RNA sequence: GGGAACGACUCGAGUAGAGUCGAAAAGGGGCCCUCAAACGACAGGUAAACGUGUCCCAGGAGGUCCCUGGGGAUGACGGCCAUGGAACAUGCCACUCACACAGAGGUCCUGCGUCCCCUCUGUGCGAGUCACGGCCUCUCCUGAUCAGGUCACGGAUACGUGGGUAAAUUUCGAUUUACCCACGUAAAAAGAAACAACAACAACAAC
Reactivity to DMS in 0.01 (KOAc 150mM, MgCl2 10mM, bicine 150mM(pH8.5), 24C), signal-to-noise 2, nucleotides 027 to 156: g030g020g010g020c010c000c000u000c030a080a150a150c120g000a070c010a040g010g020u010a090a120a160c090g020u000g020u000c010c050c030a300g060g010a050g060g030u000c030c000c030u000g010g000g010g010a060u010g020a060c070g000g010c010c020a150u010g010g010a080a110c060a080u000g020c020c050a220c030u010c000a040c030a030c030a020g000a040g030g030u000c020c020u000g000c060g000u000c040c170c010c000u010c000u000g010u010g050c030g010a080g000u000c040a060c100g000g000c000c030u000c030u000c030c010u000g030a080u010c090a100g030g010u000c010a090c050g000g010a300
Reactivity to 2A3 in 0.01 (KOAc 150mM, MgCl2 10mM, bicine 150mM(pH8.5), 24C), signal-to-noise 3, nucleotides 027 to 156: g000g000g000g020c030c030c000u070c050a150a120a040c040g080a030c050a040g000g080u120a090a140a020c070g050u010g020u050c000c010c030a000g050g030a050g000g040u080c010c000c000u010g020g010g000g010a050u110g030a020c040g030g000c050c040a090u120g050g010a140a080c060a090u230g090c030c010a010c010u000c000a000c010a010c010a000g000a000g010g010u070c000c080u100g030c020g060u050c000c040c010c010u000c000u000g000u000g000c020g000a010g010u020c030a020c100g020g010c000c010u020c000u010c000c010u040g000a100u120c050a020g030g000u060c050a010c100g030g090a250
The record gives the reactivity of an RNA of 207 nucleotides to DMS and 2A3. Conditions: 150 mM KOAc, 10 mM MgCl2 and 150 mM bicine (pH 8.5), 24 C. Values are in units of 0.01, from 0 to 300, in steps of 10. The data come from the RNA Mapping Database (RMDB), library OK3TST.